[RMDB]
RNA sequence: GGGAACGACUCGAGUAGAGUCGAAAAGAUAUGGAUCCAGCUAUGAGCCAUGGUUUCGAUAAGCUGGUAUCGGAAACGAUAUCCAGCUUUUGACGAAACACAUGGCUCAUAGCUGGAUCCUAAGUCAGAAUGUUAUUAAGUUCGCUUAAUAACAUUCAAAAGAAACAACAACAACAAC
Reactivity to DMS in 0.01 (KOAc 150mM, MgCl2 10mM, bicine 150mM(pH8.5), 24C), signal-to-noise 3, nucleotides 027 to 126: g010a060u000a300u010g000g000a020u000c010c000a000g020c010u000a010u000g010a030g000c000c000a030u000g000g000u000u000u000c010g010a170u000a010a020g010c010u000g010g020u000a010u000c000g010g000a110a090a240c010g010a010u000a000u020c010c010a020g010c000u000u000u000u000g010a300c180g010a010a010a000c000a110c000a000u010g010g010c000u000c000a010u000a000g020c000u010g000g000a000u000c000c000u000a010a040g010u000c050a190